[RMDB]
RNA sequence: GGGAACGACUCGAGUAGAGUCGAAAAGAGAUGGACAUUGAUUGUUCAGCGUGUGAGUGAGUGAGUGAGAGAUGUCCAUCUUAGGUGAACAAAACACACACACACACACACAAACAAGUACGACAAGGGGUAAUACUAACUUCGGUUAGUAUUACCCAAAAGAAACAACAACAACAAC
Reactivity to DMS in 0.01 (KOAc 150mM, MgCl2 10mM, bicine 150mM(pH8.5), 24C), signal-to-noise 3, nucleotides 027 to 126: g000a050g000a040u000g000g000a000c000a020u010u010g010a280u000u000g000u000u010c050a070g020c120g000u000g040u020g000a140g020u030g000a080g030u010g010a090g030u000g020a060g000a300g020a040u010g010u000c010c000a020u010c000u000u000a000g000g060u000g010a080a070c110a080a050a080a040c090a110c020a040c020a040c020a030c010a010c000a050c080a000c040a000c040a050a050a100c200a060a030g000u030a050c090g010a020c120a070a080g000
Reactivity to 2A3 in 0.01 (KOAc 150mM, MgCl2 10mM, bicine 150mM(pH8.5), 24C), signal-to-noise 3, nucleotides 027 to 126: g060a000g000a000u000g020g000a000c030a010u010u020g020a040u070u020g050u040u050c050a070g070c090g060u160g010u060g030a180g050u080g000a070g040u030g010a020g030u000g030a040g000a020g020a020u000g000u000c000c000a000u000c000u000u010a030g000g010u090g040a090a030c020a010a040a090a000c030a030c000a010c020a020c000a010c000a010c000a000c010a000c000a000c020a040a090a040c070a060a040g100u140a030c080g020a010c100a080a080g070